RNA sequence: GGGAACGACUCGAGUAGAGUCGAAAAGGCGGAACAGCCGCCACGCCAGCACGCCCGCGGCGACGCCCAGCGCCGCCCAGAUGGCCGCGGUGAGCCCGGCCAGGGAGUUCACCGGCACGAACACCAAGAUUAAAUAAAUAUUCGUAUUUAUUUAAUCAAAAGAAACAACAACAACAAC
Reactivity to DMS in 0.01 (KOAc 150mM, MgCl2 10mM, bicine 150mM(pH8.5), 24C), signal-to-noise 3, nucleotides 027 to 126: g010g010c020g000g010a160a150c190a160g010c020c020g010c030c030a070c100g000c020c010a050g020c080a060c080g010c030c020c070g010c020g010g010c020g000a020c040g000c010c010c020a280g000c020g010c010c020g010c020c060c060a100g000a140u000g000g020c020c030g010c090g030g020u000g000a060g010c020c030c020g000g020c040c060a070g020g000g010a070g010u000u000c030a040c020c010g000g000c030a080c120g000a080a070c070a100c070c050a070a180

An RNA of 177 nucleotides, treated with DMS and read out base by base. Source: RMDB library OK2TST, as collected in RNAgym. The RNA was probed in 150 mM KOAc, 10 mM MgCl2 and 150 mM bicine (pH 8.5) at 24 C.